[RMDB]
RNA sequence: GGGAACGACUCGAGUAGAGUCGAAAACAAGGGCUACACCCUCGCCCCGAAGCAAGUAAGAUAGAGAAAAAGCGGUUCUCGGGAGCUUCAGUUGUUUCCACCGGGUAGUAGCCGAAGCGACAGCGCAGGACUAUAUUACGUUCGCGUAAUAUAGUCCAAAAGAAACAACAACAACAAC
Reactivity to 2A3 in 0.01 (KOAc 150mM, MgCl2 10mM, bicine 150mM(pH8.5), 24C), signal-to-noise 2, nucleotides 027 to 126: c010a010a020g060g000g010c000u030a000c000a010c010c000c020u030c090g040c030c000c020c020g000a010a000g020c040a100a020g040u220a110a020g060a250u270a100g120a050g080a070a090a030a060a000g120c050g090g100u060u000c030u000c060g050g020g020a100g000c010u130u080c030a050g010u040u030g010u020u050u000c030c050a060c040c010g040g000g030u060a150g010u000a000g080c000c010g000a030a020g000c000g060a080c070a080g120c080g000c080a080
Reactivity to DMS in 0.01 (KOAc 150mM, MgCl2 10mM, bicine 150mM(pH8.5), 24C), signal-to-noise 3, nucleotides 027 to 126: c110a110a060g020g000g000c020u000a020c060a110c000c010c000u010c150g010c050c020c010c100g010a030a070g030c050a060a090g030u020a070a080g000a100u010a070g020a100g010a070a050a090a180a110g010c070g000g010u000u000c030u000c020g030g010g030a130g000c030u010u000c060a090g010u000u010g010u010u000u000c010c050a170c090c120g010g000g030u000a110g020u000a030g010c000c010g020a040a090g010c050g010a080c140a070g010c020g000c120a140

Annotation: Structure probing data (2A3 and DMS) for a 177-nucleotide construct. High DMS reactivity at an A or C suggests that its Watson-Crick edge is free. The reactions ran in a buffer of 150 mM KOAc, 10 mM MgCl2 and 150 mM bicine (pH 8.5), at 24 C. For 2A3 the reverse transcriptase was SuperScript II with manganese. For DMS the reverse transcriptase was MarathonRT.